[RMDB]
RNA sequence: GGGAACGACUCGAGUAGAGUCGAAAACAUUACGAAUUCAGUCGCAAAUUGUAGAAUUAGCUACUCUACGAUUUAGUGAGCGUUAGUAAAGUUGUAAUAUAAUAUAGUCUUUGGAAGGAUUAUAUUGGAGCCGCGGACAAGUUCGCUUGUCCGCGAACGUAAUGCUGGAGUUCGCUCCAGCAUUACGAAAAGAAACAACAACAACAAC
Reactivity to 2A3 in 0.01 (KOAc 150mM, MgCl2 10mM, bicine 150mM(pH8.5), 24C), signal-to-noise 1, nucleotides 027 to 156: c040a060u180u240a010c050g090a050a160u110u200c050a050g100u040c040g000c040a010a030a000u000u000g000u000a000g000a020a020u020u050a050g050c060u080a050c020u000c000u010a000c000g000a000u010u000u080a020g030u000g020a090g080c080g000u050u040a040g040u020a050a060a120g000u000u010g000u020a060a100u100a130u000a150a010u020a000u030a000g000u000c020u060u060u060g150g050a090a070g020g010a000u010u010a000u010a000u000u050g030g040a050g210c200c020g000c000g000g000a010c010a010a000g050u090u160c170g040c120u000u000g000u000c000c010g010c000g000a010a000